[RMDB]
RNA sequence: GGGAACGACUCGAGUAGAGUCGAAAAGAAAGAAAGAAAGAACGCCAAUAUGAUGAAUACUUAUGUAAUUCUUGAUAGGAAGAGUAUGAAACAUAAUGAGUACUAUAUACUAAUCUGAUUUAGAAAACCAUAAUAUGGAAUUCGUUCCAUAUUAUGGAAAAGAAACAACAACAACAAC
Reactivity to DMS in 0.01 (KOAc 150mM, MgCl2 10mM, bicine 150mM(pH8.5), 24C), signal-to-noise 7, nucleotides 027 to 126: g000a080a080a080g000a090a100a070g010a080a090a060g010a110a090c100g010c060c030a040a100u010a040u000g010a060u010g010a230a030u000a030c020u000u010a090u030g010u030a070a120u010u000c010u000u020g010a100u030a070g000g000a020a060g000a020g010u010a010u000g000a160a050a060c030a030u010a030a050u000g000a210g010u000a070c040u010a080u020a100u020a100c090u000a030a100u000c040u000g010a120u000u020u020a060g000a090a080a070a110
Reactivity to 2A3 in 0.01 (KOAc 150mM, MgCl2 10mM, bicine 150mM(pH8.5), 24C), signal-to-noise 8, nucleotides 027 to 126: g090a010a050a000g110a040a100a000g060a030a110a020g040a030a020c050g040c050c020a030a010u050a050u080g080a040u040g040a050a030u040a050c020u060u070a060u200g070u120a100a140u060u050c040u090u110g100a110u150a080g070g030a020a040g010a010g060u040a010u070g040a060a100a010c020a020u100a070a060u090g020a020g040u010a030c070u030a020u070a050u030a200c030u040a070a060u080c050u050g070a120u060u090u140a060g030a040a080a000a010

The data come from the RNA Mapping Database (RMDB), libraries RFM100 and RFMREP. An RNA of 177 nucleotides, treated with DMS and 2A3 and read out base by base. For DMS the reverse transcriptase was MarathonRT. For 2A3 the reverse transcriptase was SuperScript II with manganese. Conditions: 150 mM KOAc, 10 mM MgCl2 and 150 mM bicine (pH 8.5), 24 C.